[RMDB]
RNA sequence: GGGAACGACUCGAGUAGAGUCGAAAACGUCGCGGCCCUCACCGGCGACACCACAGAGGAUCUCGGGCCGAUCCGAUGAGCGCCACGCCACCGCCCGGAGGACUCGACGCGUCGGUGUUCAUCGCGACCACCGCCACCUCUUCGGAGGUGGCGGUGGAAAAGAAACAACAACAACAAC
Reactivity to 2A3 in 0.01 (KOAc 150mM, MgCl2 10mM, bicine 150mM(pH8.5), 24C), signal-to-noise 1, nucleotides 027 to 126: c070g010u020c000g000c000g020g080c050c030c040u010c030a090c020c020g000g000c000g030a050c040a050c010c080a140c100a030g060a030g060g020a090u040c040u040c020g000g010g000c040c070g000a110u070c060c020g020a180u080g100a110g000c030g000c000c030a050c000g000c020c000a050c040c000g050c000c020c070g100g010a120g010g080a050c020u000c000g030a020c090g010c010g030u010c030g010g040u000g030u050u040c070a090u010c030g070c020g010a000